The record gives the reactivity of an RNA of 177 nucleotides to DMS and 2A3.
The reactions ran in a buffer of 150 mM KOAc, 10 mM MgCl2 and 150 mM bicine (pH 8.5), at 24 C.
The DMS profile rests on 3,036 reads.
[RMDB]
RNA sequence: GGGAACGACUCGAGUAGAGUCGAAAACAGCGGCCGCAUUGGAUGCAGAGGUCCUGAUUGAUGCGGGCCUUGGUGACAUAGUUGAGGUUGAGAUAUUGCCAGUCGGUCACAUGGGAAACGGCGCAGACCUAAAUGGUACCUUCGGGUACCAUUUAGGAAAAGAAACAACAACAACAAC
Reactivity to DMS in 0.01 (KOAc 150mM, MgCl2 10mM, bicine 150mM(pH8.5), 24C), signal-to-noise 3, nucleotides 027 to 126: c080a100g010c110g000g020c020c030g020c060a030u000u000g020g020a110u000g010c040a090g010a110g000g020u010c030c010u010g010a120u000u010g010a070u000g000c050g020g020g020c010c010u000u000g020g020u000g020a060c070a060u000a070g010u000u000g000a080g020g020u000u000g010a110g000a090u020a090u010u000g020c020c020a090g030u000c050g020g000u010c020a030c060a080u000g000g000g020a070a060a110c120g000g000c010g010c090a120g010a190
Reactivity to 2A3 in 0.01 (KOAc 150mM, MgCl2 10mM, bicine 150mM(pH8.5), 24C), signal-to-noise 1, nucleotides 027 to 126: c010a000g080c030g010g090c030c010g070c040a060u040u120g130g050a030u090g110c040a040g050a030g080g020u060c010c010u040g060a090u000u190g070a040u190g000c040g070g000g040c000c000u060u040g050g030u020g020a020c000a030u160a100g070u030u120g010a020g080g060u030u060g090a060g000a060u080a100u110u170g000c030c000a060g040u070c030g020g000u040c000a040c010a070u100g070g000g030a110a070a030c050g020g000c000g000c040a030g040a080
It was measured as part of the RMDB library OK2TST.